[RMDB]
The record gives the reactivity of an RNA of 177 nucleotides to DMS and 2A3. The 2A3 profile rests on 695 reads. The RNA was probed in 150 mM KOAc, 10 mM MgCl2 and 150 mM bicine (pH 8.5) at 24 C. For 2A3 the reverse transcriptase was SuperScript II with manganese.
RNA sequence: GGGAACGACUCGAGUAGAGUCGAAAACUGGAAUACAGAAUUUUAAGGAAACGCUGUAUUAUCAGAACAAUGUCUUUAUGUCUGAAGCUAAAUGCUGGGUGGAAACCGAUCUGAAGAAAGGGCCACAUCCAAAAUAUUACUUCGGUAAUAUUUUGGAAAAAGAAACAACAACAACAAC
Reactivity to DMS in 0.01 (KOAc 150mM, MgCl2 10mM, bicine 150mM(pH8.5), 24C), signal-to-noise 2, nucleotides 027 to 126: c000u010g010g000a030a000u000a000c000a000g000a080a120u000u000u000u010a110a180g040g020a060a080a050c300g010c020u000g010u000a000u000u000a040u000c000a010g010a130a110c110a110a070u010g020u010c050u010u000u020a060u010g010u010c060u010g000a120a020g020c020u010a090a060a050u000g050c050u010g000g010g000u000g030g000a030a060a070c060c010g000a170u000c050u020g020a080a110g010a010a060a290g000g010g010c010c070a040c070a100
Reactivity to 2A3 in 0.01 (KOAc 150mM, MgCl2 10mM, bicine 150mM(pH8.5), 24C), signal-to-noise 1, nucleotides 027 to 126: c000u000g010g010a000a000u000a020c000a010g040a030a040u050u020u120u140a290a130g110g060a000a120a000c050g020c000u030g000u000a010u000u010a080u080c000a000g000a020a010c000a040a210u100g120u050c010u020u300u130a160u230g050u000c040u070g020a030a000g000c010u030a120a130a000u060g030c020u020g030g000g080u000g030g020a090a110a010c000c000g020a060u020c010u100g120a170a110g040a080a200a000g000g000g040c000c000a000c000a090